[RMDB]
RNA sequence: GGGAACGACUCGAGUAGAGUCGAAAAUAUCAAAUACACGAGCUACACAAGCACAGUUUGAUGUAUGGUACAUGGCAAUCAAAAGUUUUUAUGAACUCGAAGACGAGGAGAUGGGUAUGAUCAUGAACACCAUACUGGCGUUCGCGCCAGUAUGGUGAAAAGAAACAACAACAACAAC
Reactivity to DMS in 0.01 (KOAc 150mM, MgCl2 10mM, bicine 150mM(pH8.5), 24C), signal-to-noise 2, nucleotides 027 to 126: u060a070u090c060a090a030a010u000a060c080a140c060g000a020g010c000u010a100c160a040c300a040a030g010c180a110c170a190g050u000u000u000g000a040u020g000u020a070u000g000g010u020a060c050a110u010g000g070c030a070a070u060c080a040a110a010a090g020u010u000u000u000u010a110u070g050a100a070c090u010c050g080a070a070g000a020c090g000a090g010g020a000g000a060u020g000g000g000u000a000u000g000a050u000c040a010u020g030a190a160
Reactivity to 2A3 in 0.01 (KOAc 150mM, MgCl2 10mM, bicine 150mM(pH8.5), 24C), signal-to-noise 2, nucleotides 027 to 126: u090a000u000c030a080a050a000u160a050c030a000c060g060a060g000c040u130a030c100a020c030a300a140g020c030a000c030a110g000u010u010u040g110a150u000g030u040a030u050g000g060u030a040c010a010u000g030g000c070a000a060u030c030a120a050a000a060g000u000u020u040u140u150a120u220g000a000a010c000u000c030g100a210a040g130a060c030g030a000g040g000a020g060a000u120g000g000g060u020a020u080g060a040u050c020a030u110g000a040a010

Chemical mapping of a 177-nucleotide RNA with DMS and 2A3. Conditions: 150 mM KOAc, 10 mM MgCl2 and 150 mM bicine (pH 8.5), 24 C. 2A3 adducts were read by reverse transcription with SuperScript II with manganese. The 2A3 profile rests on 972 reads.